[RMDB]
RNA sequence: GGGAACGACUCGAGUAGAGUCGAAAAACCGUCAACGUGUCAUUGGCUUGUGUGUCAUUGAGAUCCCCGGCCAGGCGCAUUAACCGAUCUGCACGUAUGGCUUCGUCCUACGUCGCGAUUUGGACGCGGAAACAGAAGACUUCGGUCUUCUGUUUCCAAAAGAAACAACAACAACAAC
Reactivity to DMS in 0.01 (KOAc 150mM, MgCl2 10mM, bicine 150mM(pH8.5), 24C), signal-to-noise 1, nucleotides 027 to 126: a180c060c000g000u000c070a060a010c000g070u000g000u010c170a090u000u000g000g000c010u030u010g030u000g010u010g030u000c150a060u020u000g010a170g040a020u050c020c010c010c070g000g010c090c000a110g030g040c100g000c010a100u020u010a180a090c030c000g010a000u030c050u000g000c000a040c030g000u000a040u190g020g000c000u020u030c150g030u050c000c000u030a050c000g060u050c090g020c000g010a070u000u000u060g040g000a080c300g000c300
Reactivity to 2A3 in 0.01 (KOAc 150mM, MgCl2 10mM, bicine 150mM(pH8.5), 24C), signal-to-noise 4, nucleotides 027 to 126: a000c030c000g080u080c060a110a090c040g010u010g010u070c040a190u110u080g000g010c000u100u100g030u020g000u000g010u140c000a100u100u300g070a050g030a140u060c020c020c000c020g010g000c000c000a000g030g000c000g000c020a030u050u130a050a010c000c000g020a020u000c070u250g000c010a010c000g000u010a080u250g000g000c040u150u140c070g120u100c020c000u000a010c010g030u020c060g000c020g020a010u030u000u240g030g000a010c030g010c010